[RMDB]
RNA sequence: GGGAACGACUCGAGUAGAGUCGAAAAGAGAUCACAUGGAAUAGAGAUGAGCCAUCCCAGCGGAAGUUAUUCUACAUUAUCCAGGAACCAGCCAAUUUAGCAGCUGGCCUCAGACCCAUGAAUAAACUCAGCCAAGACCAGGUGAACAACUCACCUAAGCGUCAGUAUGAUUCGUCAUACUGACGCUAAAAGAAACAACAACAACAAC
Reactivity to 2A3 in 0.01 (KOAc 150mM, MgCl2 10mM, bicine 150mM(pH8.5), 24C), signal-to-noise 1, nucleotides 027 to 156: g000a000g010a000u110c020a020c090a120u070g000g020a130a110u050a160g070a030g030a050u170g030a070g000c010c000a060u000c000c000c000a020g000c100g060g000a060a000g020u020u020a030u090u110c050u060a070c030a120u070u120a060u130c060c040a000g080g040a110a240c010c000a000g000c040c000a110a120u220u070u150a150g000c020a000g030c000u000g020g040c020c000u050c040a100g030a030c000c010c010a020u040g060a000a020u100a070a000a000c020u020c000a010g130c100c000a010a020g020a100c070c040a020g060g020u050g010a030a100c090a020a010c090u000c020a000c000c000u020a040
Source information
An RNA of 207 nucleotides, treated with 2A3 and read out base by base. Values cover nucleotides 27 to 156. The 2A3 profile rests on 443 reads.